The data come from the RNA Mapping Database (RMDB), library OK3TST. Structure probing data (2A3) for a 207-nucleotide construct. The 2A3 profile rests on 754 reads. The reactions ran in a buffer of 150 mM KOAc, 10 mM MgCl2 and 150 mM bicine (pH 8.5), at 24 C.
RNA sequence: GGGAACGACUCGAGUAGAGUCGAAAAAACUCAUACCUAGAUAGCCUAAGCUGUAACAUAUAGUCUGAAUUAUCAAAAGAUUACUAGAGAACUAAGUAUUACAGAAAUACUCUGUGUCAUAAUUACCUCCAUAGUAAUCAGAACAGAACCAAUAACCCGAACUGAGUGAAUUCGUUCACUCAGUUCGAAAAGAAACAACAACAACAAC
Reactivity to 2A3 in 0.01 (KOAc 150mM, MgCl2 10mM, bicine 150mM(pH8.5), 24C), signal-to-noise 2, nucleotides 027 to 156: a000a000c110u160c040a050u170a050c000c000u080a030g000a060u070a030g040c010c000u110a170a120g000c000u060g060u130a060a060c030a030u150a120u160a220g030u010c000u050g100a140a090u150u080a030u210c000a080a080a040a200g010a000u010u000a000c010u020a000g020a000g000a260a020c050u040a150a000g020u000a060u030u060a030c010a010g100a050a280a040u110a080c020u000c000u080g050u040g010u030c030a020u030a200a060u010u010a060c050c030u000c010c000a030u000a000g000u000a000a010u010c010a000g020a020a040c030a020g030a060a020c070c030a020a110u200a110a110c040c180